[RMDB]
RNA sequence: GGGAACGACUCGAGUAGAGUCGAAAAGAGUAGAGAAUGGAGGUCCUAGAAUGUUCCAACCUGGGAGGGAUCGGGGUGGGAAAUCAGCAGUGUCUAGGUCAGUGCUCACCUCCUGCUCACUCAUGUCCCAGUAAGGCCGUUCUCCAUAACUCAUCAACUAAUCAGCGGAUUUCGAUCCGCUGAUUAGAAAAGAAACAACAACAACAAC
Reactivity to 2A3 in 0.01 (KOAc 150mM, MgCl2 10mM, bicine 150mM(pH8.5), 24C), signal-to-noise 1, nucleotides 027 to 156: g030a000g010u120a000g000a000g040a240a060u070g000g000a000g010g000u080c000c000u010a000g120a100a080u110g010u120u060c060c000a060a100c060c030u120g030g000g090a290g000g000g010a110u180c070g030g000g010g100u220g030g000g070a090a090a090u090c020a040g040c000a040g010u010g120u090c020u010a000g030g000u120c030a000g140u070g170c080u080c030a000c000c010u040c030c000u000g090c000u000c000a000c000u000c010a060u130g000u000c010c000c000a010g080u030a020a060g000g000c000c000g000u000u000c000u050c010c000a100u160a140a160c060u000c080a100u010c010a030a150